Source: RMDB library OK1LIB, as collected in RNAgym. An RNA of 177 nucleotides, treated with 2A3 and read out base by base. Reactivities are given for positions 27 through 126.

RNA sequence: GGGAACGACUCGAGUAGAGUCGAAAAUAUCACUAUACUUAUCGGUCUUAAUGGCCGCGCAGCGGCACUAACAACAUUCGUAGCAACCCACUCCUCAAGUUCUUCCGGAACUAGGUCAAAAGAAGAACUCUCCAGUCGCAUUCGUGCGACUGGAGAGAAAAGAAACAACAACAACAAC
Reactivity to 2A3 in 0.01 (KOAc 150mM, MgCl2 10mM, bicine 150mM(pH8.5), 24C), signal-to-noise 1, nucleotides 027 to 126: u300a110u110c020a000c080u150a250u130a090c050u000u050a060u060c000g030g000u020c000u000u220a190a080u300g080g000c020c000g040c000g040c060a130g180c000g030g030c020a000c110u090a160a000c080a020a030c000a050u080u040c020g140u220a000g020c000a000a130c000c000c000a000c080u110c000c000u000c060a070a060g030u090u000c140u030u100c030c030g030g000a000a000c000u000a030g170g000u050c090a050a000a000a000g050a220a000g080a100a000